[RMDB]
RNA sequence: GGGAACGACUCGAGUAGAGUCGAAAAGAAAGGCAGCCAGUGCAGCCCACGGAGCCAGUCGACGCAUGCUUUUGCAUGCCGCCCACGACUGAGGGCAGCUGCGGCACUGAGGGCAGCUGCCGAAAGAAUGGAUACCACGGUUCGCCGUGGUAUCCAUAAAAGAAACAACAACAACAAC
Reactivity to 2A3 in 0.01 (KOAc 150mM, MgCl2 10mM, bicine 150mM(pH8.5), 24C), signal-to-noise 1, nucleotides 027 to 126: g100a010a060a010g050g000c030a010g010c030c040a040g070u050g010c090a000g050c000c040c000a020c080g110g020a030g090c020c010a000g040u050c050g010a050c040g000c000a000u020g040c020u010u210u290u300g000c010a000u020g040c000c000g010c000c040c000a050c020g080a000c070u070g030a100g050g090g070c010a010g010c010u070g060c070g070g010c050a010c030u050g020a120g020g040g000c060a000g000c010u000g000c000c000g000a020a000a000g020a000
Reactivity to DMS in 0.01 (KOAc 150mM, MgCl2 10mM, bicine 150mM(pH8.5), 24C), signal-to-noise 2, nucleotides 027 to 126: g020a070a070a120g010g000c010a040g010c030c030a050g020u000g020c020a120g000c040c010c020a100c100g010g020a150g000c020c010a030g010u000c040g030a090c140g000c010a000u000g000c000u010u000u010u020g000c000a000u000g000c020c150g000c010c010c090a300c020g010a060c030u020g020a160g000g000g000c030a120g000c060u000g030c090g000g000c040a040c050u020g020a090g020g020g010c090a090g000c010u000g030c000c010g010a040a050a060g000a140
Description: Chemical mapping of a 177-nucleotide RNA with 2A3 and DMS. The RNA was probed in 150 mM KOAc, 10 mM MgCl2 and 150 mM bicine (pH 8.5) at 24 C. The DMS profile rests on 1,158 reads. For 2A3 the reverse transcriptase was SuperScript II with manganese.